[RMDB]
RNA sequence: GGGAACGACUCGAGUAGAGUCGAAAAGCCAUGAGUCGCAACGCAAAGCCGCGGCAAGUGGAGUUAGCGAGAAGAGACUAGGCUUUUGUUUCUUCAAGUGAAGCGGUCACCAAUCAGGUGUGGUAGUAGGAGCCUGCAUGGUUCGCCAUGCAGGCAACACCUAUUCAUAGUUCGCUAUGAAUAGGUGAAAAGAAACAACAACAACAAC
Reactivity to DMS in 0.01 (KOAc 150mM, MgCl2 10mM, bicine 150mM(pH8.5), 24C), signal-to-noise 3, nucleotides 027 to 156: g000c010c000a060u010g000a300g000u000c010g050c000a070a080c010g000c040a090a120a250g030c020c020g040c030g010g000c040a060a300g010u000g010g010a090g010u000u000a180g000c040g000a290g010a070a110g000a090g010a050c010u010a090g010g020c080u000u000u000u010g000u000u000u000c000u000u000c010a080a260g010u000g000a080a100g010c040g010g000u000c030a050c030c010a090a100u010c070a050g000g020u000g010u000g010g010u000a090g010u010a110g010g020a140g000c000c000u000g000c010a020u010g040g010u000u010c300g010c000c000a030u000g000c010a010g020g020c000a010a030
Reactivity to 2A3 in 0.01 (KOAc 150mM, MgCl2 10mM, bicine 150mM(pH8.5), 24C), signal-to-noise 5, nucleotides 027 to 156: g010c010c000a040u130g050a010g030u020c010g020c040a050a070c040g010c090a120a190a020g050c070c050g010c020g040g000c110a090a040g020u020g000g050a090g030u080u100a030g010c030g010a040g020a140a030g040a040g010a020c020u030a070g100g100c070u090u040u030u040g010u000u020u000c000u020u030c030a060a040g030u050g100a070a020g040c020g040g040u060c020a010c030c020a040a130u180c100a110g000g020u050g020u040g050g040u050a080g030u040a040g060g190a030g010c000c010u000g000c000a000u000g000g050u030u050c090g010c060c000a000u010g000c000a000g010g000c000a000a000